[RMDB]
RNA sequence: GGGAACGACUCGAGUAGAGUCGAAAACGGCAUUUCCGCAGCAGCCAUGACCUACCAGGCUGCGGUGCGGCUCGCCGCACAGGUCAUCCCUCAUCGGGCGCGUCCUGCGUCCUUCCACGCCAACCCAAGACCAUUGCUUCCUUCGGGAAGCAAUGAAGAUUCUGUCAUUGUUCGCAAUGACAGAAUCAAAAGAAACAACAACAACAAC
Reactivity to 2A3 in 0.01 (KOAc 150mM, MgCl2 10mM, bicine 150mM(pH8.5), 24C), signal-to-noise 2, nucleotides 027 to 156: c020g010g000c030a090u070u000u080c050c070g000c040a030g020c000a000g040c020c020a150u070g060a120c020c030u120a180c090c060a000g020g020c020u000g000c000g000g010u020g020c000g000g000c060u110c160g100c010c000g000c000a040c000a000g040g000u050c030a150u100c020c030c010u070c030a180u120c040g000g000g010c020g000c000g040u160c070c040u110g000c010g010u030c000c050u000u050c030c010a090c090g040c020c000a040a030c060c010c000a010a010g040a060c060c000a000u000u000g000c020u000u040c000c000u020u040c080g070g000g000a000a000g020c000a000a000u000g000a000a010
Chemical mapping of a 207-nucleotide RNA with 2A3.
For 2A3, 1,364 sequencing reads were counted.
Conditions: 150 mM KOAc, 10 mM MgCl2 and 150 mM bicine (pH 8.5), 24 C.
It was measured as part of the RMDB library M2RFPK.
For 2A3 the reverse transcriptase was SuperScript II with manganese.
Values are in units of 0.01, from 0 to 300, in steps of 10.